[RMDB]
RNA sequence: GGGAACGACUCGAGUAGAGUCGAAAAGAUAUGGAACCCACAGACAUGAAGCUAUUCGGAAACGAAUAGCCUUCAACAGCUGUGUUCGGUUCCUAAGUCAAAACGAAGAUUCUUCGGAAUCUUCGAAGAAUAUAUUCACGUUCGCGUGAAUAUAUUCAAAAGAAACAACAACAACAAC
Reactivity to 2A3 in 0.01 (KOAc 150mM, MgCl2 10mM, bicine 150mM(pH8.5), 24C), signal-to-noise 5, nucleotides 027 to 126: g010a000u010a010u050g000g010a000a000c000c020c000a000c010a000g060a010c100a270u300g000a000a000g000c000u020a000u000u000c010g000g000a010a000a000c010g000a000a010u000a000g010c020c010u020u010c000a190a190c070a050g000c000u020g000u020g030u300u300c080g000g000u000u000c000c000u000a010a010g000u000c020a010a050a100a120c030g000a000a010g000a000u000u000c000u070u110c300g130g000a000a000u000c000u000u010c000g000a030a000
Reactivity to DMS in 0.01 (KOAc 150mM, MgCl2 10mM, bicine 150mM(pH8.5), 24C), signal-to-noise 4, nucleotides 027 to 126: g000a020u000a010u010g000g000a010a000c000c000c010a010c000a010g010a030c070a150u010g010a020a020g000c000u000a000u010u000c000g020g010a010a010a030c010g010a020a010u010a000g000c200c020u000u010c010a140a100c250a150g010c000u010g020u010g010u010u010c110g010g010u000u000c000c000u000a010a080g000u000c000a100a050a110a220c040g010a010a000g010a010u000u000c000u000u020c230g030g000a020a000u000c000u000u000c000g020a040a080
Conditions: 150 mM KOAc, 10 mM MgCl2 and 150 mM bicine (pH 8.5), 24 C.
Structure probing data (2A3 and DMS) for a 177-nucleotide construct.
For 2A3, 12,523 sequencing reads were counted.